[RMDB]
RNA sequence: GGGAACGACUCGAGUAGAGUCGAAAACGGUCCAGUAACCAUAGCGUGAGGGCGGUCAUAUAUUUGGCCGCCCUCGCAAGGUUUACCCACCUUAUAGUGAGAAGUUAACCACAGAAAGGUAACACCAUCAUGGCCCUGUCAUUUGACCAAACCACGAAGAACAACUCUAAUUCGUUAGAGUUGUUCUAAAAGAAACAACAACAACAAC
Reactivity to DMS in 0.01 (KOAc 150mM, MgCl2 10mM, bicine 150mM(pH8.5), 24C), signal-to-noise 2, nucleotides 027 to 156: c080g030g030u000c010c030a070g010u000a070a040c020c030a130u010a180g000c160g040u000g040a020g000g030g030c030g050g040u000c010a040u040a260u040a150u000u000u010g020g000c000c000g010c000c000c010u000c020g050c000a080a100g000g020u000u000u010a140c010c020c020a040c030c060u000u000a160u000a060g040u000g000a030g010a110a120g030u000u000a060a120c040c030a090c000a300g000a070a140a050g000g020u000a020a080c020a080c060c020a040u000c010a070u010g020g020c000c040c030u000g020u010c040a180u000u010u000g000a070c000c050a040a040a110c020c000a050c170g010a200
Reactivity to 2A3 in 0.01 (KOAc 150mM, MgCl2 10mM, bicine 150mM(pH8.5), 24C), signal-to-noise 1, nucleotides 027 to 156: c050g000g040u000c010c010a000g000u010a140a150c030c020a100u100a050g090c010g040u000g030a040g000g010g020c000g000g000u030c020a000u190a080u060a130u300u090u040g000g000c000c000g020c010c020c000u000c000g010c000a000a020g000g000u000u000u040a060c060c030c000a000c030c020u080u110a070u070a140g020u030g030a150g020a300a020g050u160u110a100a060c020c000a050c000a060g250a110a100a000g000g000u010a070a000c010a050c120c000a020u130c020a110u090g040g000c150c000c000u070g060u050c080a160u000u000u250g010a060c040c040a020a000a010c020c020a040c230g160a030
This 207-nucleotide RNA was probed chemically with DMS and 2A3. The reactions ran in a buffer of 150 mM KOAc, 10 mM MgCl2 and 150 mM bicine (pH 8.5), at 24 C. DMS adducts were read by reverse transcription with MarathonRT. Source: RMDB library OK3TST, as collected in RNAgym.